[RMDB]
RNA sequence: GGGAACGACUCGAGUAGAGUCGAAAAGAAACGGUUUGCACUUUAAUCGUCAAUGCGCAACAGUACAUACUCUGGUAACCGCCACCGAAGCCCAUACUGUAGCUUGUCCUUCCGUACGGAUUGCCAGGUUUGAGACCGUGUUCGCACGGUCUCAAACAAAAGAAACAACAACAACAAC
Reactivity to 2A3 in 0.01 (KOAc 150mM, MgCl2 10mM, bicine 150mM(pH8.5), 24C), signal-to-noise 1, nucleotides 027 to 126: g110a020a060a000c000g010g070u030u030u080g080c050a040c060u090u110u180a070a040u100c010g060u050c090a090a120u070g000c040g020c010a000a060c000a050g070u110a040c040a100u100a060c010u030c020u190g030g010u020a060a010c030c010g050c090c030a060c050c010g010a030a020g000c000c000c000a020u070a130c040u050g040u080a060g020c000u020u000g020u040c000c000u010u040c010c010g020u020a040c000g010g070a110u050u020g020c020c000a000g000
Reactivity to DMS in 0.01 (KOAc 150mM, MgCl2 10mM, bicine 150mM(pH8.5), 24C), signal-to-noise 2, nucleotides 027 to 126: g000a130a080a110c060g020g030u020u000u010g030c070a110c120u030u010u010a050a130u000c070g000u000c060a030a060u000g000c020g050c060a060a010c080a060g000u000a080c120a120u000a100c080u030c020u000g000g010u010a050a070c050c000g020c060c050a040c030c000g000a030a100g000c090c030c030a100u000a050c060u010g000u000a110g000c080u000u000g000u000c030c030u020u010c020c170g000u010a080c070g000g000a120u000u010g000c050c050a040g000